[RMDB]
RNA sequence: GGGAACGACUCGAGUAGAGUCGAAAAUUAUCUUUCGAGAUAAUAGACCUUUGUGCUAGUGGAGCUAUACGAGAGGAGGGAGACCCAUUGGGUCUCCUCCCCACCCUCGAGUAUAGCGUUGAAACUAGCACUCUGGUGUGAGCAAAGUUCGCUUUGCAGAACAGAUAUAGUUCGCUAUAUCUGUUCUAAAAGAAACAACAACAACAAC
Reactivity to 2A3 in 0.01 (KOAc 150mM, MgCl2 10mM, bicine 150mM(pH8.5), 24C), signal-to-noise 3, nucleotides 027 to 156: u010u010a010u000c020u050u140u110c220g110a040g010a060u030a030a030u040a080g140a030c030c000u000u000u000g010u000g000c010u000a000g020u030g040g030a020g010c000u010a000u000a010c010g010a000g000a010g100g010a000g000g000g010a000g000a000c000c000c110a170u190u300g030g000g000u000c020u020c020c000u010c020c000c000c000a060c030c000c020u010c010g020a010g000u010a000u000a000g010c000g000u000u000g000a010a000a000c010u010a000g000c000a000c000u000c000u000g060g040u040g070u130g070a090g010c020a030a020a000g010u090u090c180g030c100u030u040u060g000c070
Reactivity to DMS in 0.01 (KOAc 150mM, MgCl2 10mM, bicine 150mM(pH8.5), 24C), signal-to-noise 3, nucleotides 027 to 156: u020u000a040u000c020u010u000u020c230g010a070g010a010u000a010a020u000a120g020a100c020c000u000u000u000g020u000g010c000u000a010g020u000g010g000a280g020c020u000a010u000a020c010g000a300g000a050g010g010a300g010g030g030a040g010a030c000c000c010a290u000u000g100g060g020u000c000u000c010c010u000c020c030c020c070a150c300c010c000u000c030g010a300g010u000a000u000a000g030c000g020u000u000g010a220a190a050c010u000a010g020c000a010c000u000c020u000g000g020u000g020u010g000a140g020c020a030a080a080g010u000u000c150g020c010u000u000u000g010c090